[RMDB]
RNA sequence: GGGAACGACUCGAGUAGAGUCGAAAACGAUUUAUAGCAGAAAACUUAACAUUCCCAUAUACAUUAGAAACAUAUUAUGGUGAUGUAAAUAUUCUUGACACGGCUACUCUUGUAUGGGAACGUGACACUUGCCAGUAAUUUUCGAAUUACUGGCAAGAAAAGAAACAACAACAACAAC
Reactivity to DMS in 0.01 (KOAc 150mM, MgCl2 10mM, bicine 150mM(pH8.5), 24C), signal-to-noise 2, nucleotides 027 to 126: c040g020a130u010u000u000a100u000a130g030c090a150g000a070a030a110a150c140u010u000a120a050c000a050u000u000c150c000c000a040u000a020u010a040c110a070u020u000a130g020a160a100a110c130a080u000a030u020u010a020u000g010g010u000g020a010u000g010u000a040a020a080u000a070u020u000c000u000u000g010a100c060a020c070g000g020c150u000a100c060u000c010u000u010g030u020a040u000g010g000g030a080a060c030g000u000g000a130c090a150
Reactivity to 2A3 in 0.01 (KOAc 150mM, MgCl2 10mM, bicine 150mM(pH8.5), 24C), signal-to-noise 3, nucleotides 027 to 126: c020g000a010u080u250u120a300u210a110g020c060a020g150a070a050a020a030c080u110u120a080a020c030a020u070u060c040c010c010a000u010a000u020a040c000a030u030u180a060g120a050a140a000c020a040u160a040u130u060a020u040g010g000u070g000a010u000g000u050a000a070a030u110a040u050u050c000u040u050g020a010c010a000c000g000g060c070u120a130c010u090c010u090u150g140u140a090u240g070g000g010a010a000c000g010u010g000a020c000a000